[RMDB]
RNA sequence: GGGAACGACUCGAGUAGAGUCGAAAAAGUAGCGGACCACGGAGGCCCGGAGUCUGCGCAGGGCCAGCCAGUAAGCACGCACCAGUAACAGGUUACACAGCAGGCAUUCUCCGCCGGUGCGCCCGCGCCCGGAACAGGCGUUCGCGCCUGUUCCGGGAAAAGAAACAACAACAACAAC
Reactivity to 2A3 in 0.01 (KOAc 150mM, MgCl2 10mM, bicine 150mM(pH8.5), 24C), signal-to-noise 1, nucleotides 027 to 126: a000g080u090a000g000c000g000g060a060c000c000a000c090g070g000a010g000g060c010c050c000g000g010a100g020u050c160u200g080c000g000c030a030g000g000g000c000c000a000g090c030c000a070g000u160a040a020g090c080a000c090g040c000a030c000c000a010g000u020a130a030c000a050g000g050u000u080a030c070a000c090a000g070c020a000g020g120c000a040u230u000c040u010c010c040g000c050c050g030g030u010g040c040g000c000c000c040g070c000g120
Chemical mapping of a 177-nucleotide RNA with 2A3.
Source: RMDB library OK1LIB, as collected in RNAgym.
The 2A3 profile rests on 523 reads.
2A3 is a SHAPE reagent: it acylates the 2'-hydroxyl of flexible nucleotides of all four kinds.